An RNA of 177 nucleotides, treated with DMS and read out base by base. The DMS profile rests on 817 reads. Values cover nucleotides 27 to 126.
[RMDB]
RNA sequence: GGGAACGACUCGAGUAGAGUCGAAAAGAUAUGGAAAAACAGAUAGCGAUCCCAGCAGAGAACGAUUGUUUCGGAAACGAAAUAGAGUUCGACGAAGCUGGGAGUCGCUAUCUGUUUUUCCUAAGUCCUUGCAUAAACUGUUCGCAGUUUAUGCAAGAAAAGAAACAACAACAACAAC
Reactivity to DMS in 0.01 (KOAc 150mM, MgCl2 10mM, bicine 150mM(pH8.5), 24C), signal-to-noise 1, nucleotides 027 to 126: g020a100u030a300u010g010g010a050a040a010a010a000c010a000g000a000u010a020g030c000g010a200u000c000c000c000a030g120c000a060g000a220g030a010a010c000g000a240u010u020g030u010u000u000c010g000g010a190a130a300c010g020a000a000a000u010a000g000a300g010u010u000c000g010a140c240g000a110a170g010c010u000g010g000g010a000g000u010c000g010c000u010a000u000c000u020g000u000u000u000u000u000c000c010u020a010a060g000u010c030